[RMDB]
RNA sequence: GGGAACGACUCGAGUAGAGUCGAAAAAAUCGAUAAGCCGUCAGUGUCCGAUGGGGUACUGAUUGUGAUGACGAUAGUAAGUCAGCAGGUGGAAACACUUUGUGCGUGGGUUAGGUAGCCUCAUAUAGUGCUGUACAGGAUUCGUCCUGUACAGCACAAAAGAAACAACAACAACAAC
Reactivity to DMS in 0.01 (KOAc 150mM, MgCl2 10mM, bicine 150mM(pH8.5), 24C), signal-to-noise 2, nucleotides 027 to 126: a100a050u020c020g040a020u040a180a300g000c000c080g000u000c000a010g000u000g000u040c000c000g000a230u030g020g020g000g050u020a000c010u000g040a000u000u050g000u000g010a080u000g040a090c000g000a010u000a100g000u000a050a120g000u000c020a090g020c040a100g010g020u000g000g000a240a060a170c040a000c060u000u000u010g060u000g000c030g040u000g000g000g000u000u020a030g000g000u020a080g020c000c010u000c050a080u030a100u020a150